[RMDB]
RNA sequence: GGGAACGACUCGAGUAGAGUCGAAAAGUGAUGUUUCGACAUCACCAUGAGCGUACUACCACGUGAUCGACGAAGUUCACUCCCCACCAAGUCCCAAAUAGGACUUGAGGUGAACAGAGAUCAGUGGUAUCGCAACAGAUGCGUCUUCGGACGCAAAGUCAAGUAACAUGUUCGCAUGUUACUUGACAAAAGAAACAACAACAACAAC
Reactivity to 2A3 in 0.01 (KOAc 150mM, MgCl2 10mM, bicine 150mM(pH8.5), 24C), signal-to-noise 8, nucleotides 027 to 156: g010u010g000a010u010g040u040u190u240c230g100a020c000a010u000c000a000c010c000a220u240g060a020g020c000g030u090a090c030u010a000c000c010a020c050g300u100g020a010u000c030g180a190c100g090a300a020g000u000u000c000a000c020u120c030c030c010c000a010c010c010a010a000g000u000c040c000c010a140a300a060u280a110g000g000a000c000u000u000g010a010g020g000u000g000a000a010c010a020g050a000g000a040u000c000a010g000u000g000g020u020a010u120c000g010c000a030a060c010a060g190a090u120g010c000g000u000c000u040u070c230g100g000a010c010g010c000a000a040a000
Reactivity to DMS in 0.01 (KOAc 150mM, MgCl2 10mM, bicine 150mM(pH8.5), 24C), signal-to-noise 3, nucleotides 027 to 156: g020u000g000a030u010g020u000u000u000c250g040a120c000a020u010c000a000c000c060a130u010g000a260g010c000g010u000a130c160u010a030c000c000a020c020g030u000g030a020u000c000g010a300c160g000a130a170g020u040u010c000a010c010u000c280c060c010c020a300c180c000a010a000g010u000c000c010c040a010a210a260u000a050g010g000a020c000u000u010g000a210g020g000u010g000a060a030c000a070g010a280g000a030u000c010a090g030u000g010g010u000a010u000c010g030c030a150a080c110a130g000a240u000g000c000g010u010c000u020u010c300g090g010a040c000g000c010a010a010a130
Description:
The record gives the reactivity of an RNA of 207 nucleotides to 2A3 and DMS. The data come from the RNA Mapping Database (RMDB), library RNAMAK. In probing experiments dimethyl sulfate is read out at A N1 and C N3, which are open when not base-paired. Values cover nucleotides 27 to 156. 2A3 adducts were read by reverse transcription with SuperScript II with manganese. The RNA was probed in 150 mM KOAc, 10 mM MgCl2 and 150 mM bicine (pH 8.5) at 24 C. The DMS profile rests on 4,535 reads. The 2A3 profile rests on 7,664 reads.